RNA sequence: GGGAACGACUCGAGUAGAGUCGAAAACAACGCACCGAUACGGAUAGCAAUGUCAGUGCGCUGCUCAAGCAGAUCGAUAUUGAGAUCGUCGGUAUUCAAUUCCAACGUGAUUUGCGGAUACAACGCAGGUAUCACGCGGGUUCGCCCGCGUGAUACCAAAAGAAACAACAACAACAAC
Reactivity to 2A3 in 0.01 (KOAc 150mM, MgCl2 10mM, bicine 150mM(pH8.5), 24C), signal-to-noise 1, nucleotides 027 to 126: c040a040a040c050g000c070a030c000c010g000a000u090a130c050g030g050a040u080a020g080c000a000a050u020g000u000c010a020g120u080g220c100g000c060u010g020c040u090c210a100a040g000c010a000g000a100u040c000g010a010u010a020u050u040g010a010g000a050u030c000g060u020c010g000g000u000a060u050u220c030a030a100u050u000c030c040a060a040c120g020u060g010a140u010u070u150g010c000g010g020a020u090a200c080a100a000c020g000c030a000
Reactivity to DMS in 0.01 (KOAc 150mM, MgCl2 10mM, bicine 150mM(pH8.5), 24C), signal-to-noise 1, nucleotides 027 to 126: c060a050a130c190g010c160a010c030c000g010a010u000a140c190g010g060a060u000a000g000c030a030a060u030g010u000c020a070g000u040g050c210g060c030u000g000c030u030c250a170a120g000c000a020g000a060u000c000g000a030u000a090u000u000g000a050g000a020u000c000g020u010c010g020g010u000a080u020u000c140a130a110u000u000c000c060a100a030c140g010u010g000a100u000u000u000g050c040g000g020a100u010a010c230a060a180c020g000c030a040